The record gives the reactivity of an RNA of 177 nucleotides to DMS and 2A3. For 2A3 the reverse transcriptase was SuperScript II with manganese. The DMS profile rests on 15,665 reads. The reactions ran in a buffer of 150 mM KOAc, 10 mM MgCl2 and 150 mM bicine (pH 8.5), at 24 C. Reactivities are given for positions 27 through 126. DMS adducts were read by reverse transcription with MarathonRT.
RNA sequence: GGGAACGACUCGAGUAGAGUCGAAAAGCCUAACAGUUCGCUGUUAGGCAAAUGCACAGACUUCGCAACUGUGAAAAACACAACAGUAGUGUCUAUGCGAGGAUCGUUGCGUCUUCGGACGCAACAAGUAAUAUUCUGGUUUCGACCAGAAUAUUACAAAAGAAACAACAACAACAAC
Reactivity to DMS in 0.01 (KOAc 150mM, MgCl2 10mM, bicine 150mM(pH8.5), 24C), signal-to-noise 8, nucleotides 027 to 126: g000c000c000u000a000a000c000a000g020u000u010c240g020c000u000g010u000u000a000g010g020c000a000a010a030u000g020c010a020c020a030g000a040c010u000u000c100g010c090a120a070c040u000g000u010g000a040a070a090a120a130c170a080c130a110a050c080a050g000u000a080g010u000g000u000c030u000a050u000g000c010g010a110g010g010a120u010c120g000u000u000g000c000g020u000c000u000u010c190g010g000a010c000g010c000a000a010c010a030a080
Reactivity to 2A3 in 0.01 (KOAc 150mM, MgCl2 10mM, bicine 150mM(pH8.5), 24C), signal-to-noise 9, nucleotides 027 to 126: g000c000c000u000a000a010c000a010g060u090u110c160g040c120u000g000u000u000a000g000g000c000a020a030a010u110g000c000a010c000a030g030a040c020u060u020c080g010c060a070a060c030u010g000u050g130a180a030a010a040a010c100a030c040a150a060c020a060g080u140a020g030u110g020u080c050u070a060u050g000c020g010a030g060g040a120u150c110g000u000u000g000c000g000u000c000u020u050c210g070g000a000c000g000c000a000a000c000a000a010